RNA sequence: GGGAACGACUCGAGUAGAGUCGAAAAACAGUUCAUAGUUACUGAGAAUCUACCUUGCGCCAACCACUUCAGUAUUUUAUUUGAUCCUUUAGGUCUCUUUAGAGAUAAAUUCUCAUCUUAUAAAUAGAAUAAACCAGGGCUUAGUAACUUGCCCAAAGCAGGUAAAUAAUUUCGAUUAUUUACCUGCAAAAGAAACAACAACAACAAC
Reactivity to 2A3 in 0.01 (KOAc 150mM, MgCl2 10mM, bicine 150mM(pH8.5), 24C), signal-to-noise 1, nucleotides 027 to 156: a000c000a020g010u080u060c040a030u070a110g030u010u020a020c010u030g020a010g000a050a100u010c020u060a040c220c040u020u040g000c030g000c070c030a060a070c010c030a040c090u090u070c040a060g020u010a100u020u090u000u030a100u030u170u140g000a020u050c020c010u010u050u110a090g010g070u000c000u000c000u030u180u090a070g000a020g000a020u040a160a160a080u220u070c100u150c010a080u100c000u020u300a110u080a180a040a000u080a010g020a040a070u220a160a000a010c000c120a000g040g000g000c000u030u000a000g000u000a020a020c020u030u010g020c000c000c020a010a010a010
This 207-nucleotide RNA was probed chemically with 2A3. The reactions ran in a buffer of 150 mM KOAc, 10 mM MgCl2 and 150 mM bicine (pH 8.5), at 24 C. 2A3 is a SHAPE reagent: it acylates the 2'-hydroxyl of flexible nucleotides of all four kinds. The 2A3 profile rests on 553 reads.